RNA sequence: GGGAACGACUCGAGUAGAGUCGAAAAAACGUUGCAUGGUCGUAAAACAUGCCCGGCUUACCGUGAGCCGCCUUUGAAAGAAAGGUUUACACGGACUCUGUUGCGUUACGCACGUACCUAACUUGUGAAAACGGCAUCUUGUUCGCAAGAUGCCGAAGCUUAACUAGCUCUUCGGAGCUAGUUAAGCAAAAGAAACAACAACAACAAC
Reactivity to 2A3 in 0.01 (KOAc 150mM, MgCl2 10mM, bicine 150mM(pH8.5), 24C), signal-to-noise 2, nucleotides 027 to 156: a000a000c000g010u000u000g000c010a010u000g010g050u190c010g070u130a050a040a030a040c000a000u010g010c050c000c000g010g010c010u020u080a090c000c000g000u010g010a000g000c000c000g010c000c000u020u000u000g080a140a040a000g020a000a000a000g030g040u000u060u060a040c000a000c010g030g000a020c070u170c050u140g110u120u020g020c010g070u110u020a050c230g000c020a010c020g020u010a000c000c000u090a180a230c090u150u130g040u030g100a050a060a020a060c000g000g010c000a000u020c000u030u020g010u070u050c090g020c130a000a000g010a000u000g000c000c000g000a000a000
Structure probing data (2A3) for a 207-nucleotide construct. The 2A3 profile rests on 983 reads.